Source: RMDB library OK1LIB, as collected in RNAgym. The record gives the reactivity of an RNA of 177 nucleotides to 2A3 and DMS. 2A3 adducts were read by reverse transcription with SuperScript II with manganese. For DMS, 1,131 sequencing reads were counted. The reactions ran in a buffer of 150 mM KOAc, 10 mM MgCl2 and 150 mM bicine (pH 8.5), at 24 C. The 2A3 profile rests on 1,099 reads.
[RMDB]
RNA sequence: GGGAACGACUCGAGUAGAGUCGAAAAGAGGGCAGACAGACACAAUCCAGGCCAAUUCAAAAUGUCCCAGGCCCUCACAGAACAAUCCACCACGCCAGUGCGCCACUCACGGACAAUGACAGAAGAAAUUACAGGCUUCGUUCGCGAAGCCUGUAAUAAAAGAAACAACAACAACAAC
Reactivity to 2A3 in 0.01 (KOAc 150mM, MgCl2 10mM, bicine 150mM(pH8.5), 24C), signal-to-noise 2, nucleotides 027 to 126: g000a000g000g070g000c030a000g090a120c010a020g060a060c000a000c010a090a030u120c010c000a000g050g080c030c020a040a040u020u190c020a000a080a000a260u070g000u010c020c040c000a030g130g000c000c000c000u010c000a010c020a010g070a140a000c020a040a040u100c020c000a090c000c000a040c050g000c000c000a010g010u000g070c020g020c000c010a070c020u040c000a050c000g020g050a040c010a060a180u190g020a000c060a010g200a170a060g070a000a220
Reactivity to DMS in 0.01 (KOAc 150mM, MgCl2 10mM, bicine 150mM(pH8.5), 24C), signal-to-noise 2, nucleotides 027 to 126: g060a070g000g000g070c000a200g040a070c300a120g020a090c230a110c150a070a060u000c060c070a020g020g050c000c080a050a020u000u030c090a000a000a080a160u020g000u060c010c000c050a170g030g000c000c010c000u010c020a110c120a040g000a020a070c200a090a080u020c040c010a070c110c070a040c120g010c020c000a090g010u000g000c050g000c000c020a080c000u020c070a100c040g050g000a000c070a000a020u060g000a020c110a070g000a140a110g110a110a240